[RMDB]
RNA sequence: GGGAACGACUCGAGUAGAGUCGAAAAUCCGUCAUCAACACAUUUCGGUUAAAUAUAACUGACAAAUCAAACAAUAAUUUCGCAGUAGCUGCGUAAUAGCCACUGCAUCGCCUAACAGCAUCUCCUACGUGCUGUUAACGCCAUUCAACCCAAGUAGCCAUGUCCAAGUCUUCGGACUUGGACAUGGAAAAGAAACAACAACAACAAC
Reactivity to 2A3 in 0.01 (KOAc 150mM, MgCl2 10mM, bicine 150mM(pH8.5), 24C), signal-to-noise 2, nucleotides 027 to 156: u020c000c000g130u180c110a190u060c000a000a270c080a020c000a150u070u190u090c050g000g040u050u040a000a200a010u130a080u030a130a030c090u030g130a010c050a020a050a000u300c090a030a120a060c020a000a160u140a140a190u060u300u300c120g000c000a000g000u030a020g000c010u000g000c010g020u100a020a150u080a160g050c000c020a000c000u000g010c010a000u120c060g000c010c000u000a000a000c000a000g000c000a010u000c020u050c110c020u040a000c050g030u000g000c000u000g000u000u010a060a030c000g040c070c040a080u190u130c050a020a170c060c000c000a060a000g000u000a000g110
Conditions: 150 mM KOAc, 10 mM MgCl2 and 150 mM bicine (pH 8.5), 24 C.
An RNA of 207 nucleotides, treated with 2A3 and read out base by base.
The 2A3 profile rests on 515 reads.
Values cover nucleotides 27 to 156.